An RNA of 177 nucleotides, treated with DMS and 2A3 and read out base by base. The RNA was probed in 150 mM KOAc, 10 mM MgCl2 and 150 mM bicine (pH 8.5) at 24 C.
RNA sequence: GGGAACGACUCGAGUAGAGUCGAAAAGGAGUAGAGAGUACUCACCUGUCGUCGUCGACGAAGGCCGGUGAGCAGUAAGCCGGACGGUCCCCUCGCGGCCGAUCCUCUGGAGCUCUGCUCUAAGAUCGUUUAAAGCUAUGUUCGCAUAGCUUUAAACAAAAGAAACAACAACAACAAC
Reactivity to DMS in 0.01 (KOAc 150mM, MgCl2 10mM, bicine 150mM(pH8.5), 24C), signal-to-noise 6, nucleotides 027 to 126: g010g020a030g020u000a020g000a050g010a210g010u000a100c010u000c000a030c010c000u000g020u000c010g000u000c010g000u010c290g020a170c040g020a030a030g000g000c010c050g010g020u000g000a020g000c050a060g010u010a170a150g010c020c040g000g000a040c080g000g010u010c000c020c060c140u010c220g010c100g000g010c040c030g000a050u000c020c050u010c060u000g010g010a130g000c010u000c040u000g000c010u000c000u000a050a080g000a100u010c110
Reactivity to 2A3 in 0.01 (KOAc 150mM, MgCl2 10mM, bicine 150mM(pH8.5), 24C), signal-to-noise 4, nucleotides 027 to 126: g040g000a000g000u040a000g010a000g010a010g040u050a020c000u000c000a010c010c000u020g010u020c020g000u000c010g060u060c160g130a300c050g010a070a000g010g000c010c010g000g000u010g000a000g000c040a010g040u100a080a010g050c050c020g010g010a000c010g010g050u070c030c010c010c010u050c060g040c120g010g000c010c010g020a120u030c010c010u030c070u100g040g010a040g030c010u000c020u050g020c000u000c000u000a020a010g030a110u140c050